[RMDB]
Chemical mapping of a 207-nucleotide RNA with 2A3.

RNA sequence: GGGAACGACUCGAGUAGAGUCGAAAACCAAUGGGAAACCAUUGGCAACUCGGAAACGAGUUGAACGCGGAAUUAGCAUAGAAACGCGCGACAAUGCGAUUUUAAGCAUUGUCGAUUACGCCCAUGUCGAUUUUAAGACAUGGAGCGAACUAUGCAAGCAUGUAGCACCGUUCGCGGUGUUGCAUGCAAAAGAAACAACAACAACAAC
Reactivity to 2A3 in 0.01 (KOAc 150mM, MgCl2 10mM, bicine 150mM(pH8.5), 24C), signal-to-noise 2, nucleotides 027 to 156: c000c000a000a000u010g000g000g010a040a000a030c000c000a000u000u010g010g010c000a000a000c000u000c000g020g030a070a050a050c010g000a000g000u000u010g020a080a020c000g000c010g000g020a150a090u090u060a090g000c000a000u000a000g040a030a130a010c010g000c000g000c010g010a000c000a000a000u010g010c020g120a140u040u100u100u240a080a010g000c000a000u000u000g000u000c000g000a000u010u030a010c000g000c000c000c000a000u000g000u000c020g040a110u040u050u020u300a170a120g000a000c000a000u000g000g020a140g000c000g000a100a180c000u000a010u000g000c000a000a030
Annotation
Reactivities are given for positions 27 through 156. For 2A3, 3,491 sequencing reads were counted.